[RMDB]
RNA sequence: GGGAACGACUCGAGUAGAGUCGAAAAGAAAGAAAGAAAGCGGUUGGGUGGGUCCAUCGACCGUCGUGGCGUAUUCGGACGCUUUACCACGACGCGAGGAAAUUGCGAGACCGACCACCCCCUUUAACAGAGGUAUAGUAGUUCGCUACUAUACCAAGUCAGAUAAUUUGUUCGCAAAUUAUCUGACAAAAGAAACAACAACAACAAC
Reactivity to DMS in 0.01 (KOAc 150mM, MgCl2 10mM, bicine 150mM(pH8.5), 24C), signal-to-noise 2, nucleotides 027 to 156: g010a150a080a140g010a140a110a190g000a050a010a160g000c050g030g050u000u000g010g000g020u000g020g020g010u000c060c010a120u000c060g010a060c170c000g040u000c020g020u000g010g040c010g020u000a140u000u000c060g000g030a120c090g020c120u000u030u000a070c010c000a000c020g010a010c040g020c000g000a150g000g000a060a080a080u000u000g010c040g020a180g010a120c000c020g000a040c020c030a020c000c010c000c000c020u000u010u000a080a210c090a240g010a210g010g010u010a010u000a020g000u000a010g000u010u010c300g020c020u000a040c000u000a020u000a020c000c010a010a040
Reactivity to 2A3 in 0.01 (KOAc 150mM, MgCl2 10mM, bicine 150mM(pH8.5), 24C), signal-to-noise 3, nucleotides 027 to 156: g050a020a080a010g040a040a060a030g020a070a040a000g090c120g030g060u190u090g090g020g010u040g030g020g020u000c010c030a070u130c010g030a050c050c000g000u000c010g000u010g010g000c060g030u070a180u110u160c080g060g010a030c000g030c020u100u130u120a040c030c020a000c000g000a010c000g010c020g010a030g010g090a110a060a040u120u040g020c050g010a060g030a070c000c040g030a010c000c000a000c010c010c010c010c020u010u100u010a140a060c100a040g080a050g180g000u000a000u000a000g010u000a000g010u020u070c200g000c120u000a000c000u000a000u010a000c000c000a000a000
This 207-nucleotide RNA was probed chemically with DMS and 2A3. For DMS the reverse transcriptase was MarathonRT. For 2A3 the reverse transcriptase was SuperScript II with manganese. The reactions ran in a buffer of 150 mM KOAc, 10 mM MgCl2 and 150 mM bicine (pH 8.5), at 24 C.